Source information: The record gives the reactivity of an RNA of 177 nucleotides to 2A3 and DMS.
RNA sequence: GGGAACGACUCGAGUAGAGUCGAAAACUCCUACCUUAUCUGGGUAGAUAGGAUCAUCUUUGUCCCACAGUCCUUCCCAGUAUUGUGAAGUGAUGCAUUGGCGUGAGCCCAGGGGUGCCAAGGGUGGAAAUCUAGAAUUGUUCGCAAUUCUAGAUUUAAAAGAAACAACAACAACAAC
Reactivity to 2A3 in 0.01 (KOAc 150mM, MgCl2 10mM, bicine 150mM(pH8.5), 24C), signal-to-noise 8, nucleotides 027 to 126: c010u010c000c000u020a040c010c010u190u230a220u260c110u170g060g000g020u050a020g020a070u160a050g090g010a070u090c010a010u010c070u050u050u080g030u050c020c010c000a040c030a030g030u000c010c000u020u030c000c060c010a050g090u180a290u200u160g030u030g030a030a030g060u070g160a020u060g020c090a090u030u120g020g000c040g020u080g050a020g020c020c000c010a030g020g030g000g000u030g020c020c020a030a030g040g000g000u040g020g060
Reactivity to DMS in 0.01 (KOAc 150mM, MgCl2 10mM, bicine 150mM(pH8.5), 24C), signal-to-noise 9, nucleotides 027 to 126: c140u000c040c000u000a040c020c010u000u010a080u010c120u010g010g010g010u000a030g010a090u000a040g010g010a090u000c070a060u000c050u000u000u000g010u000c020c000c010a120c150a210g000u000c020c020u000u000c010c030c010a100g010u000a070u010u000g010u000g010a060a050g010u010g020a040u000g010c120a130u010u000g000g010c020g010u010g000a170g010c020c010c110a090g000g000g010g010u000g010c090c030a030a040g000g010g020u000g010g000
The data come from the RNA Mapping Database (RMDB), library OK2TRN.
The DMS profile rests on 35,397 reads.
The reactions ran in a buffer of 150 mM KOAc, 10 mM MgCl2 and 150 mM bicine (pH 8.5), at 24 C.
Values cover nucleotides 27 to 126.